Structure probing data (DMS and 2A3) for a 177-nucleotide construct. 2A3 adducts were read by reverse transcription with SuperScript II with manganese. The reactions ran in a buffer of 150 mM KOAc, 10 mM MgCl2 and 150 mM bicine (pH 8.5), at 24 C.
[RMDB]
RNA sequence: GGGAACGACUCGAGUAGAGUCGAAAAGAUAUGGAAUUCGAGGAUCUGGGACCCUAUAAUCUCGGAAACGAGGUAGGGUUCAGCCAGGGAGAAUUCCUAAGUCAAAAGAACCUGUUCGCAGGUUCAACAUUAGCGUAUUGUUCGCAAUACGCUAAUGAAAAGAAACAACAACAACAAC
Reactivity to DMS in 0.01 (KOAc 150mM, MgCl2 10mM, bicine 150mM(pH8.5), 24C), signal-to-noise 6, nucleotides 027 to 126: g010a050u010a300u010g000g000a020a010u000u000c000g010a130g010g000a040u010c010u000g000g010g000a030c000c000c010u000a030u000a300a100u010c000u000c000g010g000a100a080a210c010g010a000g020g000u000a010g000g010g010u010u000c200a060g010c010c010a010g010g000g010a070g010a030a010u000u000c000c000u010a020a100g000u010c030a100a060a120a150g010a010a010c000c000u000g010u000u010c240g030c000a010g000g000u000u000c010a080a210
Reactivity to 2A3 in 0.01 (KOAc 150mM, MgCl2 10mM, bicine 150mM(pH8.5), 24C), signal-to-noise 3, nucleotides 027 to 126: g020a030u080a050u180g020g000a020a020u010u010c040g060a290g100g010a020u020c010u000g010g000g080a020c010c010c030u020a060u040a250a300u120c010u020c010g040g020a090a060a050c010g000a000g010g010u000a000g020g000g000u060u050c020a020g120c000c010a000g010g000g000a050g000a000a010u000u000c000c000u000a120a020g040u040c030a030a020a030a220g000a000a010c010c010u010g050u080u080c300g000c100a010g010g000u000u010c010a000a000